[RMDB]
RNA sequence: GGGAACGACUCGAGUAGAGUCGAAAAAAGCCAGCCCAGCAACCGCUCGUAUAGCCGAUCUGCUGACAUCUCGCGAAUCAGGUUGCGCGCCCACUUCCGCGGUUCCUCGCGGUUGUCGUGGUAAAGGUCGCCACAAUCAUUUCGAUGAUUGUGGCGAAAAAGAAACAACAACAACAAC
Reactivity to 2A3 in 0.01 (KOAc 150mM, MgCl2 10mM, bicine 150mM(pH8.5), 24C), signal-to-noise 2, nucleotides 027 to 126: a000a000g060c040c020a010g020c010c000c000a000g000c000a000a030c030c000g060c010u030c000g090u100a070u150a190g010c020c040g040a050u020c050u120g000c020u050g040a030c030a100u040c070u070c050g040c020g040a100a120u090c020a100g060g000u030u030g040c010g000c000g000c010c000c000a030c040u020u010c020c000g040c020g050g000u110u090c030c020u140c020g000c010g000g000u000u040g010u000c050g020u170g010g010u040a080a020a070g050g010
Reactivity to DMS in 0.01 (KOAc 150mM, MgCl2 10mM, bicine 150mM(pH8.5), 24C), signal-to-noise 1, nucleotides 027 to 126: a030a080g000c030c010a070g020c000c030c050a230g010c030a010a130c120c020g020c000u000c030g000u000a080u020a070g020c070c010g000a080u000c070u000g010c170u040g040a050c080a090u000c040u000c120g020c080g000a110a060u000c110a070g000g000u000u000g020c030g000c090g010c000c030c030a060c100u000u010c010c000g000c010g000g030u040u030c120c040u000c060g020c030g000g000u000u000g000u000c070g040u040g000g000u000a050a100a050g000g000